[RMDB]
RNA sequence: GGGAACGACUCGAGUAGAGUCGAAAAGGGGUCUCGCCUUCAAUGAGGUAAAGACAUGAUCUGAAGCCUCCACGGAUCAACAGCUUUACUACCCACCAUUGAGGCGAGACGGAGGCACCCAAAGCUUAACGUUCUUGUUCGCAAGAACGUUAAGCAAGUUCUUUACCGUGUUCGCACGGUAAAGAACAAAAGAAACAACAACAACAAC
Reactivity to 2A3 in 0.01 (KOAc 150mM, MgCl2 10mM, bicine 150mM(pH8.5), 24C), signal-to-noise 5, nucleotides 027 to 156: g050g000g000g000u000c000u000c000g000c000c000u170u280c040a000a000u010g020a020g040g000u010a000a000a010g020a040c110a220u210g000a000u030c000u030g040a090a000g010c000c000u010c000c010a020c020g020g000a010u020c010a020a070c080a090g080c000u020u010u000a000c010u050a060c060c130c080a070c030c010a020u010u010g000a000g000g010c000g000a000g010a000c000g000g000a000g000g000c000a040c000c010c010a070a060a000g000c000u000u000a000a000c010g010u000u000c000u010u040g070u070u110c300g040c140a000a000g000a000a000c000g000u000u000a000a000g000c000a000a010
Reactivity to DMS in 0.01 (KOAc 150mM, MgCl2 10mM, bicine 150mM(pH8.5), 24C), signal-to-noise 1, nucleotides 027 to 156: g010g070g000g000u000c020u010c020g000c030c000u040u000c080a000a070u000g000a240g050g000u000a010a030a030g000a100c030a300u000g020a050u020c030u000g030a080a200g010c060c020u000c000c000a300c020g000g000a030u000c020a090a100c050a190g000c000u000u000u000a020c000u010a080c030c000c140a300c060c030a090u000u000g030a060g000g030c000g020a050g000a010c000g010g010a000g020g070c000a000c000c000c010a040a090a140g000c000u000u000a000a010c000g020u000u000c010u010u020g070u000u000c300g010c010a030a030g000a000a010c030g010u020u020a030a000g000c010a010a030